[RMDB]
RNA sequence: GGGAACGACUCGAGUAGAGUCGAAAACACUCGCAGCUUAAUAACCUGCGCUGAGCCCUUCUACCCUAGCUUGCCUGUGUCCUAGGGAAUCGGAAGGUCAUCCUUCACAGGAUCGUGUGGAAGUCCUGCUCGGGGCGGAAGCAUUAAAACCAAUCGACACAAGUAAACAGUUCGCUGUUUACUUGUGAAAAGAAACAACAACAACAAC
Reactivity to 2A3 in 0.01 (KOAc 150mM, MgCl2 10mM, bicine 150mM(pH8.5), 24C), signal-to-noise 3, nucleotides 027 to 156: c040a010c010u030c000g010c000a000g000c000u020u040a040a010u040a080a040c000c000u020g000c010g030c150u070g020a080g020c020c000c000u000u000c020u040a070c010c010c000u000a010g010c030u040u080g040c000c040u060g010u020g010u060c000c010u000a000g000g010g070a010a070u190c150g000g020a020a010g030g030u040c030a100u060c000c000u120u100c030a030c020a040g010g020a030u030c040g000u000g000u010g020g000a000a020g010u020c010c010u040g120c130u120c140g010g000g000g010c000g000g020a010a000g050c030a030u010u120a040a050a030a080c060c050a040a110u130c040g100a030
Reactivity to DMS in 0.01 (KOAc 150mM, MgCl2 10mM, bicine 150mM(pH8.5), 24C), signal-to-noise 1, nucleotides 027 to 156: c040a060c050u010c000g050c010a060g000c000u000u060a300a180u010a200a020c180c000u000g060c000g030c070u000g030a110g000c070c010c010u000u000c020u010a110c000c000c000u000a030g020c050u010u010g060c060c080u000g010u010g030u010c080c000u000a030g010g000g010a070a050u010c060g000g030a070a040g030g010u000c100a120u000c020c010u000u010c080a090c030a000g020g010a070u000c080g030u000g060u000g020g030a300a200g020u010c000c010u010g020c040u030c060g000g000g050g000c010g020g010a180a200g000c060a100u010u000a050a060a110a070c060c060a030a240u020c000g030a300

Description
The record gives the reactivity of an RNA of 207 nucleotides to 2A3 and DMS. The reactions ran in a buffer of 150 mM KOAc, 10 mM MgCl2 and 150 mM bicine (pH 8.5), at 24 C. For 2A3, 4,159 sequencing reads were counted. The DMS profile rests on 1,883 reads.